[RMDB]
RNA sequence: GGGAACGACUCGAGUAGAGUCGAAAAACUAAACGAAAUUUUUCUAGUGCUGGUAUGUAUAAUGCCAGUACUGGUGUAAUUGAAAUUUCGCCAGGUUCGUAAAGUGGUUAGGCAAGUGUUGUGUGCCCUGAAAAGGUGAGUUCGCUCACCUUUUCAGAAAAGAAACAACAACAACAAC
Reactivity to 2A3 in 0.01 (KOAc 150mM, MgCl2 10mM, bicine 150mM(pH8.5), 24C), signal-to-noise 3, nucleotides 027 to 126: a000c050u110a050a000a030c010g000a030a020a000u020u030u010u040u010c000u000a000g000u000g000c000u000g000g000u000a010u020g070u020a190u140a300a030u050g020c000c000a000g000u000a000c000u000g000g000u100g020u120a110a190u080u210g060a000a000a000u020u040u000c000g000c020c000a030g050g000u050u070c050g040u100a020a040a080g060u060g080g110u150u120a050g030g000c050a040a030g070u040g030u070u010g040u020g040u080g030c000c070
Reactivity to DMS in 0.01 (KOAc 150mM, MgCl2 10mM, bicine 150mM(pH8.5), 24C), signal-to-noise 2, nucleotides 027 to 126: a040c000u010a050a100a250c020g000a010a010a010u000u010u000u030u000c010u000a030g000u000g000c000u000g000g030u000a010u000g010u070a110u010a110a020u000g010c010c000a000g020u000a000c000u000g020g000u010g000u050a100a090u040u020g030a020a010a010u010u000u000c010g020c050c040a250g010g000u000u000c070g040u010a030a090a140g000u000g010g000u010u000a050g000g000c010a050a100g010u020g000u050u020g000u010g010u000g000c060c020